[RMDB]
RNA sequence: GGGAACGACUCGAGUAGAGUCGAAAAUAUGUUAGCAUUUCUGUCGAUAUAGCUUUCACUCAUAUGACACUCACCAAUAAUAGUAGAAUUAAUGUCAUAAUUUACACCAAUAGUGAGUUCGGCGGCAAAGUACCAAUACCGGUAAUCUUGUCGAGGAUCCAGAUAAGUGAUUCGUCACUUAUCUGGAAAAAGAAACAACAACAACAAC
Reactivity to DMS in 0.01 (KOAc 150mM, MgCl2 10mM, bicine 150mM(pH8.5), 24C), signal-to-noise 2, nucleotides 027 to 156: u000a000u000g020u000u010a060g000c020a130u010u000u000c040u000g070u000c020g060a100u000a100u000a130g000c070u000u000u000c030a080c080u010c050a180u000a050u010g020a060c080a060c000u000c030a080c040c050a010a220u000a090a110u010a100g020u000a090g010a100a080u000u020a040a010u000g000u010c120a160u010a030a070u000u000u000a080c040a120c040c030a090a100u030a060g010u020g010a050g000u000u000c050g020g060c070g010g000c050a020a040a060g010u000a040c030c050a050a150u000a140c160c040g020g030u000a050a060u010c020u020u000g040u000c040g000a150g000g000a170
Reactivity to 2A3 in 0.01 (KOAc 150mM, MgCl2 10mM, bicine 150mM(pH8.5), 24C), signal-to-noise 2, nucleotides 027 to 156: u210a050u080g020u010u020a010g000c020a050u000u160u000c080u090g150u100c130g020a040u030a010u050a200g000c000u050u110u070c060a070c030u030c070a030u050a050u160g000a010c000a030c070u030c000a050c030c090a140a010u100a230a020u050a100g070u040a030g080a090a080u180u040a060a050u150g030u040c010a000u000a150a000u040u050u190a030c100a040c060c000a040a040u030a130g050u020g070a000g030u080u030c020g030g040c010g010g000c010a030a020a020g000u010a010c000c000a050a050u090a300c050c050g020g000u030a030a060u030c020u040u040g000u030c010g010a030g080g020a010
Overview: Structure probing data (DMS and 2A3) for a 207-nucleotide construct. The reactions ran in a buffer of 150 mM KOAc, 10 mM MgCl2 and 150 mM bicine (pH 8.5), at 24 C. The DMS profile rests on 3,013 reads.